[RMDB]
RNA sequence: GGGAACGACUCGAGUAGAGUCGAAAAGCUACCUUUUCCAGGCAAGGCUUGAGGCAGCAAGGUGCGUAUUUGCGGUUACGAUAAACCCAGACGAAAAAGCAUAUUACCCCGAUGAUCGUUAAGGGUAAUACACCCGCAAGCAUCACAAUGCUCGUCGGGGGUCUGUAAGAUUCGUCUUACAGACCCCAAAAGAAACAACAACAACAAC
Reactivity to 2A3 in 0.01 (KOAc 150mM, MgCl2 10mM, bicine 150mM(pH8.5), 24C), signal-to-noise 1, nucleotides 027 to 156: g000c010u020a130c000c020u030u110u110u000c030c010a020g000g040c050a050a050g020g000c000u000u110g080a060g080g030c010a000g010c020a020a010g070g000u010g000c030g040u130a140u020u060u010g000c000g000g040u090u090a110c130g000a060u060a080a080a050c040c030c020a040g030a100c030g000a070a140a050a020a000g090c010a000u010a020u070u130a060c030c000c030c000g030a140u040g010a050u010c010g000u000u110a100a100g000g000g000u000a000a000u050a010c010a030c000c050c000g030c020a020a010g030c010a010u120c000a010c040a040a100u120g010c000u040c030g100u060c020g000